Structure probing data (2A3) for a 207-nucleotide construct. 2A3 adducts were read by reverse transcription with SuperScript II with manganese. It was measured as part of the RMDB library OK3TST. The RNA was probed in 150 mM KOAc, 10 mM MgCl2 and 150 mM bicine (pH 8.5) at 24 C.
RNA sequence: GGGAACGACUCGAGUAGAGUCGAAAAAUCUGGUCUGGACCUUGUGCCACUGUGGGAGGAUGGCCAUAGGAGAAAAAGAAAAAGCAUCGCUCCCUGUGGCUCCAGUGGACACACGCGUGCUUUCCUCACCUUUCUAUCACCAGAGCCCCAAGACCUAGCAUUUAUGACUCUUCGGAGUCAUAAAUGCAAAAGAAACAACAACAACAAC
Reactivity to 2A3 in 0.01 (KOAc 150mM, MgCl2 10mM, bicine 150mM(pH8.5), 24C), signal-to-noise 2, nucleotides 027 to 156: a000u030c040u030g000g010u060c080u030g100g020a100c020c010u030u060g020u020g010c020c010a030c040u070g020u190g050g140g000a040g000g050a070u070g090g040c000c010a040u040a040g060g030a070g060a060a070a030a030a030g200a010a090a030a000a010g110c030a110u110c090g020c100u030c000c000c000u010g020u000g000g010c020u030c000c000a010g000u050g000g030a040c010a000c000a030c030g120c080g050u070g020c000u090u090u050c010c010u050c040a120c010c000u090u170u110c100u160a120u120c010a010c050c000a040g000a030g030c000c010c020c010a000a030g030a060c030c010u030a040